[RMDB]
RNA sequence: GGGAACGACUCGAGUAGAGUCGAAAAAUGGCUCGUGGAAUCGAUGUUCAUAACAUCUUACAGGCUAGCAGGGAAACAUUGAAUCUAGAGCUUUAUAGUGAGCUCAUCCAGGCUUUUCCAAUGCCUAAUAGUACAAGGGAUUCGUCCCUUGUACUAUAAAAGAAACAACAACAACAAC
Reactivity to 2A3 in 0.01 (KOAc 150mM, MgCl2 10mM, bicine 150mM(pH8.5), 24C), signal-to-noise 5, nucleotides 027 to 126: a000u070g020g010c020u020c070g080u100g100g110a080a060u110c050g020a020u040g020u070u050c050a030u100a160a040c010a040u020c020u060u150a060c060a050g080g000c030u050a030g060c060a020g040g040g000a040a040a030c030a050u040u110g030a040a040u060c080u120a100g000a000g020c000u040u050u030a180u030a050g210u160g030a000g000c000u010c010a010u030c050c020a010g060g030c060u060u040u030u040c030c010a020a030u090g010c010c000u040a060
Reactivity to DMS in 0.01 (KOAc 150mM, MgCl2 10mM, bicine 150mM(pH8.5), 24C), signal-to-noise 9, nucleotides 027 to 126: a080u000g000g000c010u000c050g020u000g010g020a090a090u010c110g010a020u000g010u010u010c160a120u010a100a120c110a050u000c030u010u010a120c140a080g010g010c030u000a080g010c120a110g010g000g000a070a030a050c050a070u000u000g000a050a060u000c120u000a110g010a010g010c010u000u000u010a110u000a180g010u010g000a010g010c010u000c020a100u000c060c060a050g000g000c070u000u000u000u000c020c040a080a080u010g010c030c010u000a100